The record gives the reactivity of an RNA of 177 nucleotides to DMS and 2A3. For 2A3, 1,833 sequencing reads were counted. For DMS, 1,644 sequencing reads were counted. The reactions ran in a buffer of 150 mM KOAc, 10 mM MgCl2 and 150 mM bicine (pH 8.5), at 24 C. For 2A3 the reverse transcriptase was SuperScript II with manganese.
[RMDB]
RNA sequence: GGGAACGACUCGAGUAGAGUCGAAAAGACGUUCACGAGGUCGUCGGCGGCGGACAGAAAAGCGAACAGAAAGCGGUAAAACUCGAGCUCGGAGGGGGUCAGGGCGGCGACGUCCUUCGCGUCGUCCGAAUGUGUGUGACUUCGGUCACACACAUUCAAAAGAAACAACAACAACAAC
Reactivity to DMS in 0.01 (KOAc 150mM, MgCl2 10mM, bicine 150mM(pH8.5), 24C), signal-to-noise 2, nucleotides 027 to 126: g020a060c050g000u020u010c030a000c100g000a090g030g010u010c030g020u000c040g000g020c030g020g010c030g000g000a050c040a140g020a110a050a110a100g020c050g010a050a090c090a120g000a050a080a080g060c030g000g010u000a050a080a110a070c090u000c020g020a100g010c040u010c040g000g020a110g000g010g000g010g000u020c080a100g020g030g000c040g000g000c000g000a030c010g000u000c030c060u030u000c060g040c050g020u000c010g000u000c020c090
Reactivity to 2A3 in 0.01 (KOAc 150mM, MgCl2 10mM, bicine 150mM(pH8.5), 24C), signal-to-noise 1, nucleotides 027 to 126: g020a010c010g030u060u030c040a030c090g020a040g040g040u040c000g020u010c000g020g000c000g050g040c030g020g000a030c020a100g110a060a120a030a020g030c050g020a020a030c000a060g120a100a060a020g080c000g080g010u100a050a080a050a050c050u050c050g040a020g020c040u010c030g000g020a050g030g020g000g000g000u010c040a040g070g010g020c030g010g010c000g000a010c000g040u030c000c060u100u090c050g000c000g000u020c000g000u000c010c030